[RMDB]
The record gives the reactivity of an RNA of 207 nucleotides to 2A3 and DMS.
It was measured as part of the RMDB library RNAMAK.
The DMS profile rests on 2,461 reads.
DMS adducts were read by reverse transcription with MarathonRT.
High 2A3 reactivity points to a flexible backbone, as in loops and unpaired stretches.

RNA sequence: GGGAACGACUCGAGUAGAGUCGAAAAGCGUACUACAGACGUCACCCUUGGAUUUAUACCUGAGCCCAUCCCAAAUAGGAUGGGUGAGGGUAUUGUCAGGCAAGUCGUCUGUAUCGCAAAAUCGCAAUAAUGGGGAUUCGUCCCCAUUAUUGCGAAACGUUACUAGGCAGUUCGCUGCCUAGUAACGAAAAGAAACAACAACAACAAC
Reactivity to 2A3 in 0.01 (KOAc 150mM, MgCl2 10mM, bicine 150mM(pH8.5), 24C), signal-to-noise 2, nucleotides 027 to 156: g000c000g000u060a100c100u000a000c010a010g000a000c000g020u020c020a120c040c040c000u030u160g170g000a050u130u300u080a010u050a010c000c000u020g010a030g010c000c000c000a000u000c050c000c000a130a300a200u300a130g000g010a000u010g000g000g010u000g000a000g000g020g000u000a000u000u000g000u020c010a000g000g010c020a250a280g000u040c000g000u000c000u000g000u010a000u030c010g030c000a010a040a010a120u030c000g000c000a000a000u010a000a000u000g000g000g000g020a000u000u090c230g090u030c030c000c000c000a000u000u000a000u010u000g000c000g000a000a000a000
Reactivity to DMS in 0.01 (KOAc 150mM, MgCl2 10mM, bicine 150mM(pH8.5), 24C), signal-to-noise 1, nucleotides 027 to 156: g030c020g040u000a080c060u000a030c000a050g010a040c000g010u010c010a230c060c060c010u000u000g050g010a050u000u000u000a010u000a000c010c000u000g010a300g000c020c010c000a020u010c020c000c040a080a190a260u020a060g010g010a000u000g010g050g030u000g000a240g020g000g060u000a000u000u010g010u000c020a050g000g040c030a130a130g000u000c010g030u010c010u000g030u000a000u000c020g000c020a050a010a100a060u000c000g000c000a030a020u000a020a020u000g030g010g060g000a070u010u000c300g010u000c000c000c000c000a000u000u000a000u000u010g020c000g000a000a000a050